[RMDB]
RNA sequence: GGGAACGACUCGAGUAGAGUCGAAAAACAUACUUCGGUAUGUAACGAUCCUAAGUCUUACGGGAGAACGCAGGGAGAGGUGUCGGAAACGACACUACCCACCUCCCUGAGUGGUUCGAAGAACGUAAGAUAUGGAGAUGCACCGUUUCGACGGUAAAGUUUAAGCUUAUUUCGAUAAGCUUAAACUAAAAGAAACAACAACAACAAC
Reactivity to DMS in 0.01 (KOAc 150mM, MgCl2 10mM, bicine 150mM(pH8.5), 24C), signal-to-noise 3, nucleotides 027 to 156: a050c000a010u000a030c000u000u000c300g060g020u010a020u000g010u000a110a130c060g030a190u000c010c000u000a090a200g010u010c010u000u000a010c020g010g000g020a190g020a090a020c020g010c000a060g010g010g010a010g010a230g030g020u000g000u000c000g010g010a150a120a220c010g010a020c000a010c000u000a000c010c020c010a300c150c000u000c000c000c000u000g010a020g030u000g040g030u020u000c040g020a130a140g000a140a180c020g000u000a010a000g010a020u000a140u010g010g000a060g010a100u000g020c030a060c020c020g010u000u010u010c120g010a060c030g000g000u010a070a060
Reactivity to 2A3 in 0.01 (KOAc 150mM, MgCl2 10mM, bicine 150mM(pH8.5), 24C), signal-to-noise 5, nucleotides 027 to 156: a000c010a000u010a000c010u040u110c260g080g000u000a000u030g030u040a070a060c080g050a050u030c010c010u040a100a030g030u000c010u010u000a000c010g000g020g010a020g000a000a000c020g000c030a000g000g000g000a010g000a010g000g000u000g000u000c010g010g050a050a050a050c020g010a000c000a010c010u090a120c000c010c000a020c020c000u000c000c000c000u000g000a010g030u300g090g020u010u000c010g060a080a000g010a020a010c000g000u010a000a010g000a000u020a020u020g000g000a070g010a040u240g150c100a050c040c010g010u050u090u190c190g080a040c010g000g030u050a140a170
Source: RMDB library RNAMAK, as collected in RNAgym. Chemical mapping of a 207-nucleotide RNA with DMS and 2A3. Values cover nucleotides 27 to 156. For DMS, 7,320 sequencing reads were counted.